The record gives the reactivity of an RNA of 207 nucleotides to DMS and 2A3.
[RMDB]
RNA sequence: GGGAACGACUCGAGUAGAGUCGAAAAGGAGCUCGCCAAGCUCUUAAUCGUAGGUAGAGCUUGCGUUCGCUCUACCUUACCACCGGAGCGAACUGUAGGGUCGGUGGUAUCGUGACUCUACAGUUAGGGCACGAUACGAUAUUGCUCUAAGCGAGCAGCGGGGUAAAUAUUUCGAUAUUUACCCCGCAAAAGAAACAACAACAACAAC
Reactivity to DMS in 0.01 (KOAc 150mM, MgCl2 10mM, bicine 150mM(pH8.5), 24C), signal-to-noise 1, nucleotides 027 to 156: g020g010a100g020c000u010c000g040c050c080a110a180g000c000u000c020u010u000a040a090u000c050g020u000a080g020g000u010a000g010a050g030c010u010u010g010c150g010u000u000c250g080c000u000c000u000a040c010c000u020u010a010c010c010a120c080c070g030g010a100g080c040g030a060a080c100u010g040u000a090g000g020g000u000c000g030g030u000g000g040u000a010u000c010g000u040g000a140c000u010c040u010a050c030a150g050u000u010a000g040g000g000c050a010c040g000a120u000a050c000g010a040u000a170u010u000g000c010u000c020u010a190a120g010c040g010a040g060c010a110
Reactivity to 2A3 in 0.01 (KOAc 150mM, MgCl2 10mM, bicine 150mM(pH8.5), 24C), signal-to-noise 3, nucleotides 027 to 156: g150g030a070g000c000u000c000g000c000c020a040a030g010c000u000c020u020u040a070a070u060c030g020u030a010g000g010u030a000g010a010g010c040u080u130g140c110g190u090u110c030g000c010u000c000u000a000c010c000u010u040a030c010c010a020c020c000g010g000a020g010c020g020a070a080c060u090g040u140a060g010g000g020u030c020g000g050u080g050g020u050a040u060c010g030u000g060a150c000u010c000u010a020c030a060g060u090u030a000g010g010g010c030a010c020g010a020u060a100c000g020a010u040a060u080u070g000c010u000c000u010a050a030g000c000g010a000g000c030a000
Values cover nucleotides 27 to 156. For 2A3, 1,869 sequencing reads were counted.